An RNA of 177 nucleotides, treated with DMS and 2A3 and read out base by base. The 2A3 profile rests on 1,111 reads. The data come from the RNA Mapping Database (RMDB), library OK1LIB. Conditions: 150 mM KOAc, 10 mM MgCl2 and 150 mM bicine (pH 8.5), 24 C.
[RMDB]
RNA sequence: GGGAACGACUCGAGUAGAGUCGAAAAGAAGACGUGACGAAAAGUCACGUCAAUACAGAGACUACGCUACUCUGAAAAACACAACAAAAGUGUAAAAGCGUAGCAGGAUCGAGAGAUCCUGAAAAGACACUACCCACCCUUUCGAGGGUGGGUAGUGAAAAGAAACAACAACAACAAC
Reactivity to DMS in 0.01 (KOAc 150mM, MgCl2 10mM, bicine 150mM(pH8.5), 24C), signal-to-noise 1, nucleotides 027 to 126: g050a140a120g000a010c000g000u000g000a000c010g010a040a070a190a120g040u000c000a060c000g080u000c040a000a110u000a130c000a040g000a000g000a170c000u000a010c000g000c000u000a020c000u000c000u040g000a010a030a280a100a000c030a000c030a060a180c300a050a190a130a040g000u000g000u000a030a000a100a080g000c000g050u000a000g010c040a000g000g010a000u000c000g000a090g000a150g010a000u030c010c000u000g000a000a030a050a200g030a230
Reactivity to 2A3 in 0.01 (KOAc 150mM, MgCl2 10mM, bicine 150mM(pH8.5), 24C), signal-to-noise 1, nucleotides 027 to 126: g190a060a030g000a000c010g000u040g000a010c020g070a020a150a090a110g000u000c010a000c000g040u000c010a000a000u010a000c000a000g020a000g030a020c000u000a000c000g000c060u100a190c010u000c000u020g060a020a010a000a000a000c020a010c020a220a070c040a010a100a190a170g050u010g010u040a030a060a060a000g030c030g000u000a000g000c000a000g000g010a000u000c010g000a000g000a000g000a150u000c000c000u040g000a000a000a000a000g000a000